RNA sequence: GGGAACGACUCGAGUAGAGUCGAAAAUCUAUAACCAAAACCUAAUGCUUGUGACGAUUCAGGCUCAAAUUCUAAUGAUGCAUCAUUCAAUUGUAAUUUUUCUAAUGCUUCUCUUAAAUCAUUAUAACGGUUAGGUAAUAUUCGUAUUACCUAACCGAAAAGAAACAACAACAACAAC
Reactivity to DMS in 0.01 (KOAc 150mM, MgCl2 10mM, bicine 150mM(pH8.5), 24C), signal-to-noise 3, nucleotides 027 to 126: u000c100u020a080u010a130a200c060c070a080a100a130a090c100c090u000a100a090u020g030c050u010u000g020u000g040a100c100g000a130u010u010c060a070g010g000c020u010c120a050a050a080u000u000c040u030a070a070u010g010a060u010g000c090a020u000c110a020u000u000c090a050a070u000u010g000u030a060a070u000u000u010u000u000c020u010a020a050u010g000c060u000u000c040u000c030u000u010a060a070a060u010c080a050u000u000a040u000a090a260
Reactivity to 2A3 in 0.01 (KOAc 150mM, MgCl2 10mM, bicine 150mM(pH8.5), 24C), signal-to-noise 4, nucleotides 027 to 126: u050c030u050a170u120a180a120c030c030a040a040a020a070c010c040u120a150a060u170g000c010u050u050g040u040g040a070c050g080a090u090u030c030a000g040g000c000u020c070a090a130a070u180u080c030u080a050a060u080g040a020u050g020c020a070u040c000a020u070u110c050a070a140u080u070g080u100a090a130u060u100u050u110u000c040u050a050a050u040g030c020u010u040c020u000c000u040u170a080a140a110u100c050a060u030u250a130u090a180a090